[RMDB]
RNA sequence: GGGAACGACUCGAGUAGAGUCGAAAAUGGUACCGCUGCAUGAAGGGUGUUACAGGACCUAUUGUAACACGCGCAGCUUGCAGCUUUGUCGGAGGUUGUGUUAAAGUGUGUCUAGAAGGUUUUGAUUCCGUUGCUGCUAGGGUUGAAGUCUGCUACCCUACGCUGAACUAUUCGUAGUUCAGCGUAGAAAAGAAACAACAACAACAAC
Reactivity to DMS in 0.01 (KOAc 150mM, MgCl2 10mM, bicine 150mM(pH8.5), 24C), signal-to-noise 2, nucleotides 027 to 156: u010g030g020u010a050c060c070g000c010u010g000c010a080u000g000a140a200g030g040g050u010g020u000u000a030c040a050g020g020a180c190c130u010a110u010u020g020u010a010a030c020a010c000g010c040g020c140a160g030c020u000u000g010c000a040g010c040u010u020u000g000u000c050g010g020a040g020g020u000u010g000u000g000u000u010a050a100a080g030u000g000u020g020u010c030u000a100g020a110a130g000g010u010u000u000u000g010a190u010u010c050c040g000u000u010g010c000u010g000c020u000a100g020g000g040u010u000g020a060a200g020u010c060u000g010c000u010a090c060c050
Reactivity to 2A3 in 0.01 (KOAc 150mM, MgCl2 10mM, bicine 150mM(pH8.5), 24C), signal-to-noise 2, nucleotides 027 to 156: u100g000g070u050a040c000c070g000c010u000g000c010a020u030g080a140a140g100g030g010u000g020u030u030a010c020a040g060g110a130c000c080u130a200u130u060g000u000a010a020c030a000c020g170c060g000c060a070g110c000u000u030g020c010a030g000c010u090u100u110g080u060c040g020g020a020g000g040u090u080g000u010g020u070u090a070a050a040g020u040g010u000g030u060c030u080a050g030a070a060g080g000u000u040u060u180g070a070u080u000c030c040g000u030u040g020c040u000g000c010u030a040g030g030g000u020u030g010a070a010g010u000c030u020g040c010u050a060c030c020

Overview: This 207-nucleotide RNA was probed chemically with DMS and 2A3. Values cover nucleotides 27 to 156. The data come from the RNA Mapping Database (RMDB), library OK3TST. Conditions: 150 mM KOAc, 10 mM MgCl2 and 150 mM bicine (pH 8.5), 24 C.